[RMDB]
RNA sequence: GGGAACGACUCGAGUAGAGUCGAAAAGAUAUGGAGCAUGGUCGAUCGAUAAGCCUGGGUCGGAAACGACCCAAGGCUUUUGACGAUUCAACAUGCUCCUAAGUCAAAACGGGCGUUCGCGCCCGAACUUACUAAAGUGGUUCGCCACUUUAGUAAGAAAAGAAACAACAACAACAAC
Reactivity to 2A3 in 0.01 (KOAc 150mM, MgCl2 10mM, bicine 150mM(pH8.5), 24C), signal-to-noise 3, nucleotides 027 to 126: g040a010u070a040u220g000g000a000g010c000a000u020g030g090u180c060g050a250u020c030g040a080u040a220a000g010c010c020u000g000g000g010u000c000g010g040a150a060a040c020g000a000c000c060c010a030a020g000g010c010u000u010u000u020g010a010c010g010a000u080u080c030a040a050c010a000u000g000c000u010c000c000u000a000a000g000u000c010a000a010a100a140c020g000g000g030c030g040u090u100c270g010c010g000c150c000c000g000a000a010
Reactivity to DMS in 0.01 (KOAc 150mM, MgCl2 10mM, bicine 150mM(pH8.5), 24C), signal-to-noise 6, nucleotides 027 to 126: g000a050u000a300u000g000g000a010g010c000a010u000g010g010u010c300g000a040u000c010g010a170u010a030a020g000c000c000u000g010g010g020u000c010g000g000a120a070a230c000g010a030c000c000c010a010a010g020g010c000u000u000u000u000g020a190c110g010a030u000u010c070a220a220c010a010u000g010c000u000c000c000u000a010a080g010u010c050a080a050a120a230c050g010g010g010c000g020u000u020c250g030c020g010c010c000c000g000a020a050
Structure probing data (2A3 and DMS) for a 177-nucleotide construct. For DMS the reverse transcriptase was MarathonRT. Conditions: 150 mM KOAc, 10 mM MgCl2 and 150 mM bicine (pH 8.5), 24 C. For 2A3 the reverse transcriptase was SuperScript II with manganese.